[RMDB]
RNA sequence: GGGAACGACUCGAGUAGAGUCGAAAAUCGUGCUGUUUCAUGAAAAUGUGAAAUACGCACACUGGGUUUUUCGCGGCAUUUACGUGUUGCUUGAAUCUCAUUUCAAUUGGAUGAAUCGUAGAUCCAACCGACUUUAUGAAUUCGUUCAUAAAGUCGGAAAAGAAACAACAACAACAAC
Reactivity to DMS in 0.01 (KOAc 150mM, MgCl2 10mM, bicine 150mM(pH8.5), 24C), signal-to-noise 2, nucleotides 027 to 126: u040c090g000u010g040c000u000g030u000u010u000c000a020u020g000a080a050a300a130u060g010u000g010a010a000a000u000a000c270g040c020a010c000a110c190u010g020g000g000u000u010u030u000u000c080g000c000g000g000c010a030u010u020u040a140c220g000u000g000u010u010g000c040u020u010g010a020a030u000c010u000c030a050u000u000u030c030a110a100u000u000g000g020a030u010g000a010a110u060c250g030u020a120g020a040u000c000c000a000a050
Reactivity to 2A3 in 0.01 (KOAc 150mM, MgCl2 10mM, bicine 150mM(pH8.5), 24C), signal-to-noise 7, nucleotides 027 to 126: u160c060g000u000g000c000u020g010u000u010u000c010a030u060g290a280a240a220a170u300g010u000g030a000a010a000u100a070c150g000c000a000c000a000c050u040g040g000g000u020u020u000u010u060c050g010c000g000g000c010a020u040u060u290a100c120g010u010g010u010u030g010c000u010u020g010a030a020u000c010u000c030a100u050u110u100c110a140a150u060u040g000g010a010u030g080a140a190u160c150g060u150a080g020a110u000c000c010a010a020

The data come from the RNA Mapping Database (RMDB), library OK1LIB.
This 177-nucleotide RNA was probed chemically with DMS and 2A3.
The DMS profile rests on 3,357 reads.
For 2A3, 10,164 sequencing reads were counted.